[RMDB]
RNA sequence: GGGAACGACUCGAGUAGAGUCGAAAACACCCCACGAAGGGAGGUGCAAUAGGGCGUGAAAUCAGUUGGCGAUCGAACGACGGGGCAUACAAGGUCCUCUACACAAUGACCGUAGCGCGAGCUACCAAGAAUCUGUUAUUUUCGAAUAACAGAUUCUAAAAGAAACAACAACAACAAC
Reactivity to DMS in 0.01 (KOAc 150mM, MgCl2 10mM, bicine 150mM(pH8.5), 24C), signal-to-noise 9, nucleotides 027 to 126: c170a190c080c010c010c050a110c120g000a090a110g000g010g010a070g010g020u010g000c090a080a080u020a070g000g000g010c050g010u000g000a060a070a060u010c090a060g010u010u000g010g010c060g020a060u000c060g000a080a080c110g010a080c090g020g000g000g000c080a050u010a070c150a080a130g000g000u000c010c040u000c040u000a070c110a070c160a060a060u020g010a080c070c060g020u010a050g010c020g000c180g000a120g000c020u010a050c040c140a070
Reactivity to 2A3 in 0.01 (KOAc 150mM, MgCl2 10mM, bicine 150mM(pH8.5), 24C), signal-to-noise 9, nucleotides 027 to 126: c090a080c000c000c000c000a060c050g090a070a080g050g010g010a040g020g020u040g010c010a050a090u080a180g030g030g000c040g020u080g080a060a040a060u090c040a040g060u060u070g060g020c040g030a050u030c030g030a070a050c020g050a030c030g000g000g020g000c020a030u080a130c050a070a050g060g010u050c010c000u030c030u090a050c080a010c010a050a120u160g040a060c010c050g020u010a010g000c020g000c010g020a010g000c000u030a030c010c010a040